[RMDB]
This 177-nucleotide RNA was probed chemically with DMS and 2A3. The 2A3 profile rests on 2,170 reads. DMS adducts were read by reverse transcription with MarathonRT.
RNA sequence: GGGAACGACUCGAGUAGAGUCGAAAAGUUAUACAAGUAAUUAAAAUCUAUCCCGGGGUCAAGUAUGAUGAUUGGAGCCGAAUGGCCUAGAAAAUGCAUCCGUUCCGUCCUCGGAGAUGAUUGAGUAUGGUAUUAUAUCGUUCGCGAUAUAAUACCAAAAAGAAACAACAACAACAAC
Reactivity to DMS in 0.01 (KOAc 150mM, MgCl2 10mM, bicine 150mM(pH8.5), 24C), signal-to-noise 6, nucleotides 027 to 126: g010u000u020a050u020a090c120a100a150g010u010a080a080u020u020a070a100a060a040u010c010u040a080u010c010c020c010g010g010g010g010u010c040a120a110g000u020a050u010g010a030u000g000a100u010u000g010g010a160g020c010c010g000a120a070u050g030g010c000c080u000a080g010a060a060a060a050u020g000c020a010u000c040c070g010u010u010c060c070g000u010c010c000u000c020g010g000a080g000a020u000g000a030u000u010g000a070g000u010a080
Reactivity to 2A3 in 0.01 (KOAc 150mM, MgCl2 10mM, bicine 150mM(pH8.5), 24C), signal-to-noise 5, nucleotides 027 to 126: g020u040u080a070u040a160c100a060a070g080u160a070a050u090u110a110a080a000a040u030c050u080a060u000c060c000c020g010g000g000g000u010c010a020a120g050u090a110u150g040a000u000g010a010u010u140g070g030a040g000c000c020g110a150a210u270g030g000c000c010u040a060g130a080a150a010a010u250g100c010a000u020c030c050g090u070u030c020c050g000u000c000c000u010c000g000g000a100g000a050u030g000a000u020u050g010a020g080u080a050